An RNA of 177 nucleotides, treated with DMS and 2A3 and read out base by base. High DMS reactivity at an A or C suggests that its Watson-Crick edge is free. DMS adducts were read by reverse transcription with MarathonRT. As a SHAPE reagent, 2A3 marks flexible, mostly unpaired nucleotides at the ribose 2'-OH. Conditions: 150 mM KOAc, 10 mM MgCl2 and 150 mM bicine (pH 8.5), 24 C. For 2A3, 1,423 sequencing reads were counted.

RNA sequence: GGGAACGACUCGAGUAGAGUCGAAAAAUGCAAUGUGUACGGUGCUAUCAUUCAUUGUUAUGGCUAUCUUUGUGUCUAGACGUCUAUCUGUCUCUGUGUAGCAUCAUAACCAUAACUAUUUUGAUAAACGAGGGACUUAAUUCGUUAAGUCCCUCGUAAAAGAAACAACAACAACAAC
Reactivity to DMS in 0.01 (KOAc 150mM, MgCl2 10mM, bicine 150mM(pH8.5), 24C), signal-to-noise 2, nucleotides 027 to 126: a070u010g010c080a050a070u010g010u000g010u010a090c110g010g000u000g000c040u010a020u000c040a040u010u000c150a060u010u010g000u000u000a020u010g000g010c040u000a000u000c100u000u000u010g050u020g010u020c090u030a020g000a010c070g040u010c140u010a090u010c160u020g020u010c020u000c110u010g000u020g010u000a090g000c020a010u000c100a030u000a010a050c020c010a010u000a010a020c030u000a100u000u000u000u000g010a080u000a040a150
Reactivity to 2A3 in 0.01 (KOAc 150mM, MgCl2 10mM, bicine 150mM(pH8.5), 24C), signal-to-noise 2, nucleotides 027 to 126: a000u070g010c040a060a050u070g050u040g020u090a060c110g060g010u050g020c020u030a020u010c020a030u080u080c020a020u050u050g000u000u060a010u010g000g000c010u040a040u020c090u050u040u090g050u000g100u070c000u000a010g000a030c010g030u030c050u090a270u040c070u090g040u000c000u010c010u010g050u040g040u160a010g010c000a000u030c010a000u040a030a010c000c010a010u040a000a020c020u010a080u040u050u020u010g100a060u050a090a120